Background: The record gives the reactivity of an RNA of 177 nucleotides to 2A3 and DMS. The 2A3 profile rests on 967 reads.
[RMDB]
RNA sequence: GGGAACGACUCGAGUAGAGUCGAAAAGCGGUCAGGCACAGCUUGGCUUGAGCGUACAGAUGUCCAGUGCGACAAAGACGAUCCGCUGCUUUCUCCCGAGCCCCAAGCGUUUGUCCGACGCAAGAAAGCAUUUGAAAGGGUUCGCCCUUUCAAAUGCAAAAGAAACAACAACAACAAC
Reactivity to 2A3 in 0.01 (KOAc 150mM, MgCl2 10mM, bicine 150mM(pH8.5), 24C), signal-to-noise 1, nucleotides 027 to 126: g080c050g040g050u080c030a050g000g070c030a010c050a260g030c020u030u030g030g030c000u080u130g000a010g000c000g010u030a070c050a070g120a050u110g020u030c040c020a060g260u060g250c130g050a060c010a010a140a000g120a000c050g020a080u000c000c020g010c010u020g000c030u000u070u000c060u010c000c000c010g000a010g000c050c030c000c010a050a000g010c070g010u120u080u160g080u100c030c040g020a040c050g000c010a020a030g040a020a010a020
Reactivity to DMS in 0.01 (KOAc 150mM, MgCl2 10mM, bicine 150mM(pH8.5), 24C), signal-to-noise 1, nucleotides 027 to 126: g080c020g000g000u000c010a110g000g060c040a130c100a120g000c000u000u010g000g000c120u010u000g020a060g010c000g050u010a100c170a070g010a130u000g000u000c040c040a220g020u000g000c040g010a050c010a090a100a130g010a060c060g000a060u000c080c090g000c020u000g000c050u000u000u010c190u000c000c050c000g000a130g000c040c040c010c000a050a190g000c050g010u000u000u010g030u000c030c090g000a050c020g020c020a050a140g000a080a030a110
Conditions: 150 mM KOAc, 10 mM MgCl2 and 150 mM bicine (pH 8.5), 24 C. Values cover nucleotides 27 to 126.